Structure probing data (2A3) for a 177-nucleotide construct. Conditions: 150 mM KOAc, 10 mM MgCl2 and 150 mM bicine (pH 8.5), 24 C. For 2A3, 603 sequencing reads were counted. For 2A3 the reverse transcriptase was SuperScript II with manganese. It was measured as part of the RMDB library RFM100.
[RMDB]
RNA sequence: GGGAACGACUCGAGUAGAGUCGAAAAGAGUCACGAUUCGUUUUUCGGAUGAAAUAUGCCAGUGAACGUAUAUAUUCCAUUCGUGGAAUCAUACGGUAGGAUACUCGAUAUUCUACUGUCGUGCUCGAUGACCCGGUUUCUUCGGAAACCGGGUCAUAAAAGAAACAACAACAACAAC
Reactivity to 2A3 in 0.01 (KOAc 150mM, MgCl2 10mM, bicine 150mM(pH8.5), 24C), signal-to-noise 1, nucleotides 027 to 126: g030a010g020u170c010a000c010g030a000u040u060c000g040u000u030u000u130u140c040g000g000a000u020g090a010a010a010u260a140u300g000c010c010a100g020u040g030a030a010c000g000u000a000u000a000u000a010u030u020c040c000a000u010u000c170g090u070g040g010a000a000u030c030a020u010a000c020g000g000u000a000g000g000a000u000a040c000u050c190g040a040u000a000u000u000c000u000a010c000u000g010u010c000g000u000g000c000u000c000g030